[RMDB]
Source: RMDB libraries RFM100 and RFMREP, as collected in RNAgym.
The record gives the reactivity of an RNA of 177 nucleotides to 2A3 and DMS.
The 2A3 profile rests on 5,259 reads.
Values cover nucleotides 27 to 126.

RNA sequence: GGGAACGACUCGAGUAGAGUCGAAAAUCCAAAGGGAUCGCAUUGAUCCCAAAUCCAAGCUUCAAUGUUCUUCUCUCUUUCUCACUCAAAAUGUUAAUUUUAUUUGGGAUCAUGCUAUCCCUUUGGAACUGGAGAGAUACUUCGGUAUCUCUCCAGUAAAAGAAACAACAACAACAAC
Reactivity to 2A3 in 0.01 (KOAc 150mM, MgCl2 10mM, bicine 150mM(pH8.5), 24C), signal-to-noise 5, nucleotides 027 to 126: u010c000c000a000a000a000g010g000g010a010u000c010g010c000a020u040u300g000a000u000c000c000c010a000a000a000u020c020c020a060a020g060c030u100u090c060a100a190u170g030u060u030c020u050u010c020u010c010u000c000u020u070u010c020u020c020a070c030u100c060a060a070a050a130u120g060u100u130a150a140u140u110u100u130a030u010u010u010g000g000g000a000u000c010a000u000g000c000u000a000u000c000c010c000u000u010u000g000g010a000
Reactivity to DMS in 0.01 (KOAc 150mM, MgCl2 10mM, bicine 150mM(pH8.5), 24C), signal-to-noise 2, nucleotides 027 to 126: u000c000c000a010a000a000g000g000g020a010u000c100g020c010a020u010u050g000a000u000c000c000c000a000a000a040u010c180c080a070a150g000c090u020u020c070a090a080u010g020u010u000c050u000u000c000u000c050u000c060u000u010u000c030u000c020a120c080u010c100a050a030a110a060u010g010u050u000a050a060u000u020u010u020a030u010u010u000g000g000g000a000u000c000a040u000g000c010u000a010u010c000c000c000u010u010u000g000g000a010